[RMDB]
RNA sequence: GGGAACGACUCGAGUAGAGUCGAAAAAGACGCGAAACCACGUGACCUACGCAUGGCCAGGAUGAAGGUAGGGUAACACCUGCUGGAAGACCGAACUCAUUUGGGUUGAAAACCGAUGGGAUGAGCAAUUACUGGACCUAUUCGUAGGUCCAGUAAUAAAAGAAACAACAACAACAAC
Reactivity to 2A3 in 0.01 (KOAc 150mM, MgCl2 10mM, bicine 150mM(pH8.5), 24C), signal-to-noise 3, nucleotides 027 to 126: a000g080a010c040g030c030g060a100a040a010c030c040a020c020g040u050g110a100c020c010u050a040c060g030c050a040u070g010g020c010c030a070g020g010a060u050g000a030a010g020g010u030a000g000g040g000u010a000a020c020a030c020c000u000g000c030u030g020g030a030a020g010a020c030c000g020a070a030c000u010c030a060u050u040u200g070g010g000u040u100g060a070a040a010a010c010c010g030a050u010g070g000g000a080u070g030a040g030c030a070
Reactivity to DMS in 0.01 (KOAc 150mM, MgCl2 10mM, bicine 150mM(pH8.5), 24C), signal-to-noise 4, nucleotides 027 to 126: a080g010a150c060g020c020g000a080a090a120c060c020a080c070g030u000g020a090c040c020u000a070c130g030c110a050u010g000g010c030c050a070g010g020a130u000g000a230a100g000g010u000a030g000g010g010u000a110a100c150a160c010c020u000g020c020u000g000g000a150a030g000a080c070c020g020a070a110c030u000c010a030u010u000u000g020g000g000u010u000g000a090a070a090a130c030c000g010a050u010g000g000g000a100u000g000a100g020c170a090